Structure probing data (2A3 and DMS) for a 207-nucleotide construct. For DMS, 3,810 sequencing reads were counted. The reactions ran in a buffer of 150 mM KOAc, 10 mM MgCl2 and 150 mM bicine (pH 8.5), at 24 C. Source: RMDB library OK3TST, as collected in RNAgym. DMS adducts were read by reverse transcription with MarathonRT. 2A3 is a SHAPE reagent: it acylates the 2'-hydroxyl of flexible nucleotides of all four kinds.

RNA sequence: GGGAACGACUCGAGUAGAGUCGAAAAAGACUUGAAAACAUGGAGGUUGAUUCCAUGUUGUUUGUUUCUGAAAAUGCCCUUAAAUUGGCAUCUGUUGAAGCAUUCAAUAGUUCAGAAACUUUAGACCCUAUUUACAAAGAAUGGCCUAAUAUAGGUGUACUCUCAACUGAUUCGUCAGUUGAGAGUAAAAAGAAACAACAACAACAAC
Reactivity to 2A3 in 0.01 (KOAc 150mM, MgCl2 10mM, bicine 150mM(pH8.5), 24C), signal-to-noise 2, nucleotides 027 to 156: a010g070a020c060u080u040g050a130a080a000a000c020a000u010g000g000a000g110g030u190u170g000a200u080u000c000c000a010u000g000u000u000g000u030u200u080g020u000u000u000c000u000g050a040a070a000a020u010g000c000c000c000u110u150a190a230a200u150u060g000g000c000a040u000c040u020g000u010u020g030a080a010g210c090a060u100u000c000a010a060u010a020g030u060u000c010a030g000a020a010a000c000u100u090u040a100g030a100c000c000c040u020a110u090u160u120a070c050a040a070a000g100a050a160u120g070g000c010c000u050a110a110u150a060u140a180g000g000u060g020
Reactivity to DMS in 0.01 (KOAc 150mM, MgCl2 10mM, bicine 150mM(pH8.5), 24C), signal-to-noise 1, nucleotides 027 to 156: a090g020a120c050u000u000g000a130a050a040a050c020a050u020g010g020a020g030g000u000u000g000a190u000u000c000c010a050u010g010u000u000g020u000u020u010g030u000u000u000c000u000g000a070a080a080a100u000g030c010c000c130u000u000a060a070a260u000u000g030g020c010a040u000c000u000g000u010u000g030a080a200g080c080a120u010u000c020a050a050u000a060g010u000u000c030a070g010a160a070a100c050u000u000u000a070g000a070c000c020c170u000a130u000u000u000a230c060a080a100a200g010a080a120u000g010g020c020c030u010a050a140u000a160u000a040g020g020u010g020

The 2A3 profile rests on 667 reads.